[RMDB]
RNA sequence: GGGAACGACUCGAGUAGAGUCGAAAAAGCAAUCCGAGGUUGGGCUGACGCUUGAUUACGAUUUCGUGUUGAAGACGAUAAAAACCUCCAUCGAUGUAGUGGUGUUCUUCAACCACACGUAUAUGACCUGAUCCUAAAAAUUCGUUUUUAGGAUCAGAAAAGAAACAACAACAACAAC
Reactivity to 2A3 in 0.01 (KOAc 150mM, MgCl2 10mM, bicine 150mM(pH8.5), 24C), signal-to-noise 8, nucleotides 027 to 126: a000g030c020a030a020u020c040c020g020a030g060g030u070u070g050g020g000c030u030g030a020c030g010c030u040u060g040a050u110u090a030c040g050a070u040u080u190c110g010u060g030u080u020g020a030a010g030a020c040g020a020u200a080a100a010a030a020c010c000u010c030c020a100u110c080g200a160u170g030u100a090g010u020g030g010u060g050u120u010c010u040u030c010a020a010c020c010a020c000a010c020g050u060a100u010a040u220g030a030c010
Reactivity to DMS in 0.01 (KOAc 150mM, MgCl2 10mM, bicine 150mM(pH8.5), 24C), signal-to-noise 9, nucleotides 027 to 126: a070g010c080a090a080u010c050c040g010a080g010g010u010u000g010g010g020c040u000g010a100c150g000c040u000u010g010a100u000u000a040c070g010a180u000u010u000c120g020u010g010u000u000g010a040a040g010a050c060g010a110u020a040a050a070a090a060c050c030u000c020c050a080u010c110g010a120u010g010u010a100g020u000g000g010u000g000u010u000c050u000u000c040a050a020c020c040a060c110a040c040g010u000a050u000a080u010g000a160c180
The record gives the reactivity of an RNA of 177 nucleotides to 2A3 and DMS. The reactions ran in a buffer of 150 mM KOAc, 10 mM MgCl2 and 150 mM bicine (pH 8.5), at 24 C. Source: RMDB library OK2TST, as collected in RNAgym. The 2A3 profile rests on 13,219 reads. For 2A3 the reverse transcriptase was SuperScript II with manganese.